RNA sequence: GGGAACGACUCGAGUAGAGUCGAAAAUGACGUCGGCGGCAGCGACUUUUUCAGAAUGAGUUCAUCAUACCCAUUCACAUAGCCAAAAUAGUUAUGAUCGGAAGGAUAACUGUCUACCGAAGACGUAUCCAUUAUCUCUUUUCGAAGAGAUAAUGGAAAAAGAAACAACAACAACAAC
Reactivity to 2A3 in 0.01 (KOAc 150mM, MgCl2 10mM, bicine 150mM(pH8.5), 24C), signal-to-noise 9, nucleotides 027 to 126: u120g050a010c010g010u020c010g020g020c010g010g000c010a000g000c010g020a040c000u060u040u010u040u080c070a030g010a020a020u020g010a030g030u050u090c050a120u030c010a010u230a110c010c010c000a000u010u020c020a020c000a040u040a010g010c020c040a110a100a050a040u170a040g010u030u020a020u030g070a090u100c120g040g020a020a020g040g040a040u040a160a050c010u030g020u030c020u060a130c020c020g030a050a020g040a010c020g010u020a050
Reactivity to DMS in 0.01 (KOAc 150mM, MgCl2 10mM, bicine 150mM(pH8.5), 24C), signal-to-noise 9, nucleotides 027 to 126: u020g010a040c030g010u000c010g010g010c300g000g000c030a030g010c030g010a100c030u000u010u010u010u020c090a130g010a030a020u000g000a060g010u000u010c260a110u040c220a090u020a080c020c010c000a030u010u010c030a300c040a030u000a020g000c020c100a070a080a090a100u030a060g000u000u000a010u010g000a110u010c130g000g010a040a020g000g010a060u020a040a070c150u020g010u010c010u000a100c030c010g000a060a040g000a040c040g010u000a110

An RNA of 177 nucleotides, treated with 2A3 and DMS and read out base by base.